An RNA of 177 nucleotides, treated with 2A3 and DMS and read out base by base. The reactions ran in a buffer of 150 mM KOAc, 10 mM MgCl2 and 150 mM bicine (pH 8.5), at 24 C.
[RMDB]
RNA sequence: GGGAACGACUCGAGUAGAGUCGAAAAGGCCAACUGUCCUGUACUCCAGGCCGGGGACCAGGCUGCUGAGCGCUUCCGAGAGGGACAUCUCCUGGGCAGGGAGUGACAUAGGCCACGCCAUGUGGGCCAGCGCUAGCUGUUUCGACAGCUAGCGCUGAAAAGAAACAACAACAACAAC
Reactivity to 2A3 in 0.01 (KOAc 150mM, MgCl2 10mM, bicine 150mM(pH8.5), 24C), signal-to-noise 1, nucleotides 027 to 126: g040g000c020c000a020a000c160u040g000u050c000c060u130g140u090a030c000u020c000c000a030g050g000c110c020g000g000g010g000a040c060c010a090g080g000c030u030g020c030u160g150a050g110c100g000c110u050u080c000c010g090a120g050a020g070g060g020a010c040a060u000c020u020c050c050u120g080g070g000c050a010g040g040g000a000g000u060g010a000c010a020u050a050g010g000c010c000a000c020g000c000c030a170u260g040u120g080g040g030c000
Reactivity to DMS in 0.01 (KOAc 150mM, MgCl2 10mM, bicine 150mM(pH8.5), 24C), signal-to-noise 2, nucleotides 027 to 126: g010g010c010c020a080a210c180u000g000u010c010c300u000g030u000a090c030u000c030c020a060g040g000c080c040g000g000g010g000a110c160c070a110g010g010c040u010g000c060u000g030a110g020c070g030c070u000u000c020c020g000a270g020a200g000g000g010a050c160a150u010c060u000c020c030u000g000g020g020c050a070g000g000g000a040g010u010g000a030c080a060u000a150g010g010c000c030a050c080g010c040c030a090u000g010u020g010g000g020c030